This 177-nucleotide RNA was probed chemically with DMS. Values cover nucleotides 27 to 126. The reactions ran in a buffer of 150 mM KOAc, 10 mM MgCl2 and 150 mM bicine (pH 8.5), at 24 C. Values are in units of 0.01, from 0 to 300, in steps of 10.
[RMDB]
RNA sequence: GGGAACGACUCGAGUAGAGUCGAAAACCCCCAGGAAUGGCGGAACCCCACUCAGCAGGGUUCGCGUACCAUCCUUUCUUACCUGAUGGCCGGCAUGGUCCCAGCCUCCUCGCUGGCGCCGGCUGGGCUUAUCGUAGGUCUUCGGACCUACGAUAAGAAAAGAAACAACAACAACAAC
Reactivity to DMS in 0.01 (KOAc 150mM, MgCl2 10mM, bicine 150mM(pH8.5), 24C), signal-to-noise 1, nucleotides 027 to 126: c030c010c030c080c110a000g000g000a020a020u000g000g000c000g000g000a020a010c030c000c000c030a190c160u000c230a110g010c190a190g010g010g000u000u000c010g010c020g000u000a130c000c020a060u000c000c000u000u010u020c040u010u000a100c100c060u030g000a160u010g020g020c050c040g000g000c000a230u000g020g000u000c180c000c010a010g020c000c130u010c150c120u000c230g010c000u000g010g020c070g000c030c010g000g000c010u000g000g000g000